Structure probing data (2A3) for a 207-nucleotide construct. Reactivities are given for positions 27 through 156. The data come from the RNA Mapping Database (RMDB), library M2RFPK. For 2A3 the reverse transcriptase was SuperScript II with manganese. For 2A3, 426 sequencing reads were counted.

RNA sequence: GGGAACGACUCGAGUAGAGUCGAAAAACACCAAAACUGAAAACGGAAGGCAAUCCUUCCACGACGAUACUUACUUUCCUUUGAUCGUCGUUACUACUGGCAUAGCCACAAAGGAGAACAAACAUGGGCGCGGACACUGACUUCGGUCAGUGUCCAACCAACCCAGUCUCUUCGGAGACUGGGUUGGAAAAGAAACAACAACAACAAC
Reactivity to 2A3 in 0.01 (KOAc 150mM, MgCl2 10mM, bicine 150mM(pH8.5), 24C), signal-to-noise 1, nucleotides 027 to 156: a010c140a200c050c070a030a060a000a020c160u180g060a130a040a010a200c130g000g000a030a040g000g090c100a050a130u230c000c020u030u000c010c000a000c000g000a000c000g020a000u100a120c000u100u080a030c030u080u180u170c000c000u100u000u010g000a000u030c000g000u000c020g000u010u070a040c010u030a030c020u030g030g020c050a190u070a160g000c020c010a010c080a050a000a020g050g030a000g000a090a000c010a160a170a000c090a160u120g090g040g000c180g020c120g020g000a000c000a000c000u030g000a000c070u070u180c270g010g000u000c000a000g000u000g000u010c000c000a000a000